[RMDB]
RNA sequence: GGGAACGACUCGAGUAGAGUCGAAAACAACAAUUGCAUGUGCGUUAAGUGCCAUCCGAAAGAGAAGAUGACGAUGGCACGAAAAAUGAAUUUAUUUCAUUUGCGGUGCAUGCAUCGCAAAUGUCAACACCUACGAACUGUUCGCAGUUCGUAGGUGAAAAGAAACAACAACAACAAC
Reactivity to 2A3 in 0.01 (KOAc 150mM, MgCl2 10mM, bicine 150mM(pH8.5), 24C), signal-to-noise 4, nucleotides 027 to 126: c070a030a000c010a070a160u110u090g000c020a010u080g040u060g070c090g070u120u170a190a030g000u000g010c000c000a000u000c020c030g110a020a160a030g250a040g100a170a020g060a070u120g020a010c000g010a000u000g000g000c050a000c000g000a000a010a000a000a000u060g030a040a060u050u250u140a150u020u200u080c020a010u020u000u030g000c020g030g030u020g000c000a060u050g000c000a000u010c000g020c000a080a020a010u050g050u050c010a090a060
Reactivity to DMS in 0.01 (KOAc 150mM, MgCl2 10mM, bicine 150mM(pH8.5), 24C), signal-to-noise 2, nucleotides 027 to 126: c060a080a250c240a030a060u010u010g000c030a000u000g030u010g000c040g020u000u000a160a060g010u000g000c000c000a010u000c000c000g000a090a020a110g000a160g020a250a130g000a020u000g000a300c300g000a000u000g000g020c000a000c000g000a040a100a100a060a000u000g020a000a070u000u020u000a030u020u000u000c000a000u000u000u000g020c120g000g000u000g000c000a030u000g000c020a000u000c250g000c180a030a080a030u090g020u040c170a070a210

Chemical mapping of a 177-nucleotide RNA with 2A3 and DMS. The reactions ran in a buffer of 150 mM KOAc, 10 mM MgCl2 and 150 mM bicine (pH 8.5), at 24 C.